[RMDB]
RNA sequence: GGGAACGACUCGAGUAGAGUCGAAAAGGCCGAUCUCGUACGAUCGCGCGUCGAUCUGUCAUGAUCCGAUCAGAGUACCACGUACAGUACUAUAGGCCGGCGCGAUCGUACGGCCCUCGGCCGUGGCAUUGCAUAGUCCCUUCGGGGACUAUGCAAUAAAAGAAACAACAACAACAAC
Reactivity to 2A3 in 0.01 (KOAc 150mM, MgCl2 10mM, bicine 150mM(pH8.5), 24C), signal-to-noise 2, nucleotides 027 to 126: g010g020c040c010g000a020u000c140u050c090g000u000a000c010g000a010u010c000g000c030g010c010g210u180c010g010a040u000c000u100g300u210c060a150u300g040a030u050c010c020g020a040u060c040a000g060a010g080u000a000c030c040a170c220g100u190a050c070a110g010u000a010c020u030a030u170a130g030g010c020c000g040g000c010g000c000g010a010u010c010g000u010a000c020g000g030c000c000c010u010c000g020g000c030c000g000u020g040g040c060
Reactivity to DMS in 0.01 (KOAc 150mM, MgCl2 10mM, bicine 150mM(pH8.5), 24C), signal-to-noise 2, nucleotides 027 to 126: g000g000c050c000g010a060u000c170u010c010g010u000a010c000g000a010u000c010g010c010g000c000g030u000c070g000a020u000c000u000g010u010c230a080u010g010a010u000c030c020g000a070u000c040a190g000a030g000u000a010c010c140a180c270g000u010a120c250a090g000u000a010c000u000a090u020a130g010g000c060c000g000g010c000g020c010g000a010u000c010g020u000a000c010g000g010c090c060c100u000c010g010g020c000c000g020u010g020g000c150
Annotation: This 177-nucleotide RNA was probed chemically with 2A3 and DMS. 2A3 adducts were read by reverse transcription with SuperScript II with manganese. The 2A3 profile rests on 1,823 reads. Values cover nucleotides 27 to 126. It was measured as part of the RMDB library OK2TRN. The RNA was probed in 150 mM KOAc, 10 mM MgCl2 and 150 mM bicine (pH 8.5) at 24 C. DMS adducts were read by reverse transcription with MarathonRT.